The data come from the RNA Mapping Database (RMDB), libraries RFM100 and RFMREP. Structure probing data (2A3 and DMS) for a 177-nucleotide construct. The RNA was probed in 150 mM KOAc, 10 mM MgCl2 and 150 mM bicine (pH 8.5) at 24 C.
RNA sequence: GGGAACGACUCGAGUAGAGUCGAAAAAUAUCGUGAUCUCUAAUGAGCGUCCUCAUACUGUCCAAGGUGUUCAACCAUUUUACAAUGAAUAUUUAUGGCCUUGGUCGGUAACUGCGCAAGUGAGAUAUUUACUAACAGGUUUCGACCUGUUAGUAAAAAAAGAAACAACAACAACAAC
Reactivity to 2A3 in 0.01 (KOAc 150mM, MgCl2 10mM, bicine 150mM(pH8.5), 24C), signal-to-noise 9, nucleotides 027 to 126: a000u140a030u100c050g060u090g070a050u020c020u000c020u080a100a100u130g040a040g040c020g020u070c010c040u050c020a060u060a030c000u010g010u000c000c000a000a000g020g000u070g100u130u160c040a050a070c040c010a040u040u060u050u080a100c110a070a060u110g040a200a040u110a100u140u180u100a100u170g080g000c000c000u000u000g000g010u000c000g000g000u010a040a040c040u120g000c040g000c020a050a070g050u030g070a020g010a020u040a080
Reactivity to DMS in 0.01 (KOAc 150mM, MgCl2 10mM, bicine 150mM(pH8.5), 24C), signal-to-noise 7, nucleotides 027 to 126: a080u030a060u020c100g010u020g020a050u010c010u010c010u010a140a100u010g000a160g010c010g000u010c090c070u010c190a230u000a010c000u000g010u000c000c000a020a000g010g010u000g010u010u010c160a070a130c180c050a050u000u010u010u020a120c200a060a040u010g000a070a110u000a080u020u020u030a080u020g000g000c000c000u000u000g000g000u000c010g000g000u000a010a080c150u020g010c040g010c040a050a130g010u010g000a030g000a030u010a070